Structure probing data (2A3 and DMS) for a 177-nucleotide construct. 2A3 adducts were read by reverse transcription with SuperScript II with manganese. Values are in units of 0.01, from 0 to 300, in steps of 10. The RNA was probed in 150 mM KOAc, 10 mM MgCl2 and 150 mM bicine (pH 8.5) at 24 C.
[RMDB]
RNA sequence: GGGAACGACUCGAGUAGAGUCGAAAAAGGAUUUAUGUAAGAUGCUGAUAAUGAGUAAGGAACCUUAAAGUUAAUCGUUCCCUGUCUCUCCGCAGAACCUACUGGACAAAACAGGACAGUAAGUGGAGCGCAUUUCUAGAUUCGUCUAGAAAUGCGCAAAAGAAACAACAACAACAAC
Reactivity to 2A3 in 0.01 (KOAc 150mM, MgCl2 10mM, bicine 150mM(pH8.5), 24C), signal-to-noise 2, nucleotides 027 to 126: a000g130g000a050u120u210u060a140u180g170u010a030a090g050a090u020g020c030u020g100a050u060a300a060u130g010a080g090u040a110a120g130g000a060a060c000c000u000u020a080a070a000g000u020u190a020a040u010c030g000u000u000c000c000c000u000g090u020c000u000c000u000c010c000g000c000a010g000a110a040c000c000u000a010c000u000g000g030a020c070a000a280a000a000c030a030g080g050a000c000a000g000u060a150a020g030u010g080g050a000
Reactivity to DMS in 0.01 (KOAc 150mM, MgCl2 10mM, bicine 150mM(pH8.5), 24C), signal-to-noise 2, nucleotides 027 to 126: a020g020g000a060u010u000u000a010u020g010u020a080a120g060a050u010g140c050u030g000a080u030a010a100u050g000a170g030u040a020a080g030g000a050a090c030c010u020u050a090a110a100g030u010u050a030a170u000c060g000u000u000c000c000c030u010g000u000c060u000c000u000c000c000g070c030a130g000a070a020c060c020u000a030c030u000g010g010a100c050a070a000a120a090c300a080g000g040a030c120a000g000u040a000a040g000u000g000g010a140